[RMDB]
RNA sequence: GGGAACGACUCGAGUAGAGUCGAAAACCAAGCCCUUCCCAAGAUGAGUUUUCCCUACAGGUUCGUGGAAGACCACCACGUUGAUAGGUCGCAGGUGUAAGUGCAGCAAUGUAUUGAGCCGAGCGAUCUGAGGGUUAUUUUUCGAAAUAACCCUCAGAAAAGAAACAACAACAACAAC
Reactivity to DMS in 0.01 (KOAc 150mM, MgCl2 10mM, bicine 150mM(pH8.5), 24C), signal-to-noise 6, nucleotides 027 to 126: c020c030a150a160g010c020c010c010u000u010c010c010c000a100a070g000a070u040g000a070g020u010u010u010u010c040c010c000u020a110c170a140g020g000u010u030c040g050u000g010g010a140a090g020a160c230c110a060c050c040a040c050g030u070u020g010a080u000a040g000g000u000c000g030c000a300g000g000u000g010u030a160a050g030u000g000c000a010g010c290a110a140u000g000u020a010u000u000g000a300g020c000c000g000a120g010c030g000a020u010
Reactivity to 2A3 in 0.01 (KOAc 150mM, MgCl2 10mM, bicine 150mM(pH8.5), 24C), signal-to-noise 6, nucleotides 027 to 126: c010c000a030a010g040c010c010c000u030u040c010c000c000a050a010g080a120u140g030a030g060u020u020u050u030c010c000c000u080a080c060a090g080g090u050u120c030g020u070g000g050a190a030g060a080c010c020a010c010c000a030c040g040u060u090g070a090u080a090g050g000u010c010g000c020a010g050g000u040g040u110a040a040g010u010g000c000a010g000c000a020a140u020g000u030a010u040u050g020a020g000c000c010g010a030g020c000g000a000u010
Source information
Conditions: 150 mM KOAc, 10 mM MgCl2 and 150 mM bicine (pH 8.5), 24 C. The record gives the reactivity of an RNA of 177 nucleotides to DMS and 2A3. For 2A3 the reverse transcriptase was SuperScript II with manganese. Values cover nucleotides 27 to 126.